This 177-nucleotide RNA was probed chemically with DMS and 2A3.
RNA sequence: GGGAACGACUCGAGUAGAGUCGAAAAAAUUUUUUCGGUCUCGUCAGACAAAUCAGUGACAUGAUGGUCAUAGCGAAAGCACAGGCACGAAAUGUCACUGAUGAAAAAGUGCGUGUGACCAAUUUAAUCGCAUCAGUAUAUUCGUAUACUGAUGCGAAAAAGAAACAACAACAACAAC
Reactivity to DMS in 0.01 (KOAc 150mM, MgCl2 10mM, bicine 150mM(pH8.5), 24C), signal-to-noise 4, nucleotides 027 to 126: a060a040u010u000u000u000u000u000c070g040g020u000c000u000c150g010u010c120a120g010a070c110a100a170a020u000c000a000g000u000g000a010c000a010u000g000a280u010g010g010u010c000a040u020a060g010c020g000a100a040a150g000c000a010c270a040g000g000c000a010c030g000a070a050a000u000g010u000c000a000c000u000g000a000u000g000a030a030a030a030a090g010u000g010c090g020u000g020u000g010a130c000c020a090a080u000u010u000a030a150
Reactivity to 2A3 in 0.01 (KOAc 150mM, MgCl2 10mM, bicine 150mM(pH8.5), 24C), signal-to-noise 3, nucleotides 027 to 126: a000a000u200u090u010u010u050u090c040g000g020u020c000u010c020g050u060c020a020g010a190c030a030a090a010u010c000a000g010u000g010a000c000a010u010g000a020u170g040g000u050c020a040u300a080g010c000g060a160a040a000g010c010a060c030a030g010g000c020a010c260g020a080a070a030u000g000u000c000a010c000u000g010a000u000g020a010a000a000a020a010g100u100g030c020g040u130g080u100g030a010c000c000a000a010u130u110u120a080a060